[RMDB]
Chemical mapping of a 207-nucleotide RNA with 2A3 and DMS. Conditions: 150 mM KOAc, 10 mM MgCl2 and 150 mM bicine (pH 8.5), 24 C. The data come from the RNA Mapping Database (RMDB), library OK3TST.

RNA sequence: GGGAACGACUCGAGUAGAGUCGAAAAUCAAGAUGGUAGUAAUUAUCGUGACCCGCGUUAUAAUGGUUACGUUGCUGAUAUGAAACGUAAAGGAAUACCUUUUGGUAGCUAUGCUUUUUGUAGAUUCGUAUCUAUUAAUGAUGCUAAGAAAGAAGCAGUCUAGGCAAGGAUUCGUCCUUGCCUAGACAAAAGAAACAACAACAACAAC
Reactivity to 2A3 in 0.01 (KOAc 150mM, MgCl2 10mM, bicine 150mM(pH8.5), 24C), signal-to-noise 3, nucleotides 027 to 156: u060c010a030a010g060a050u170g010g010u050a040g060u040a060a110u060u070a130u130c010g010u020g040a060c000c000c010g000c030g030u060u070a080u030a100a120u160g010g050u060u010a000c000g000u020u010g060c040u050g050a150u020a070u270g020a060a010a000c010g000u020a010a070a110g050g000a070a060u030a070c000c000u040u110u010u080g100g010u050a030g040c070u040a040u080g010c000u020u030u040u010u050g070u130a000g000a170u050u000c020g010u050a040u000c000u000a140u130u050a140a040u230g010a000u000g000c010u000a020a020g060a040a040a010g060a000a050g010c010a000
Reactivity to DMS in 0.01 (KOAc 150mM, MgCl2 10mM, bicine 150mM(pH8.5), 24C), signal-to-noise 1, nucleotides 027 to 156: u000c060a090a080g020a000u000g000g070u000a090g000u020a060a100u000u000a060u000c000g010u030g000a100c000c030c110g010c180g010u000u000a140u000a080a030u010g020g010u000u000a030c050g000u000u000g010c030u010g030a140u000a080u010g000a030a050a050c030g000u000a030a070a090g040g010a120a070u010a040c040c000u010u000u000u010g040g040u020a060g040c070u000a070u000g010c040u000u000u000u000u030g020u000a000g020a170u000u000c140g000u000a010u000c000u000a300u020u000a070a110u020g000a080u000g020c030u000a070a170g010a040a050a130g020a070a040g020c010a100

For 2A3 the reverse transcriptase was SuperScript II with manganese.